[RMDB]
RNA sequence: GGGAACGACUCGAGUAGAGUCGAAAAGAUAUGGAAUCGCCACAUCGCGUUGAAAUUAUUCGGAAACGAAUAAUGGAGCGAGUGGGAUUCCUAAGUCAAAACGCUUACGAGUUCGCUCGUAAGCGAACUUGUUAUAUGGGUUCGCCCAUAUAACAAGAAAAGAAACAACAACAACAAC
Reactivity to 2A3 in 0.01 (KOAc 150mM, MgCl2 10mM, bicine 150mM(pH8.5), 24C), signal-to-noise 6, nucleotides 027 to 126: g010a010u030a040u100g010g060a020a000u040c100g300c300c010a030c040a300u160c070g000c020g180u230u030g000a000a020a000u010u000a000u010u010c000g020g010a040a040a030c000g000a000a010u000a000a010u010g000g000a020g020c020g030a020g000u010g020g000g000a000u000u000c000c000u000a040a000g010u000c010a030a030a090a150c030g000c000u010u000a000c010g010a000g020u080u170c300g170c170u000c000g000u000a000a000g010c000g000a010a000
Reactivity to DMS in 0.01 (KOAc 150mM, MgCl2 10mM, bicine 150mM(pH8.5), 24C), signal-to-noise 6, nucleotides 027 to 126: g010a020u000a230u010g000g000a020a000u000c010g020c000c000a020c020a250u010c020g030c000g000u000u020g000a230a100a010u010u000a010u000u000c010g000g000a050a040a110c010g020a020a000u000a000a010u000g000g000a040g020c000g010a130g010u000g000g010g000a010u000u000c000c000u000a010a070g000u000c030a090a110a140a210c030g010c000u000u010a000c000g000a020g010u000u020c300g030c000u000c010g010u000a010a000g010c000g000a010a040
Annotation
An RNA of 177 nucleotides, treated with 2A3 and DMS and read out base by base. The DMS profile rests on 12,471 reads. The 2A3 profile rests on 22,854 reads. The reactions ran in a buffer of 150 mM KOAc, 10 mM MgCl2 and 150 mM bicine (pH 8.5), at 24 C.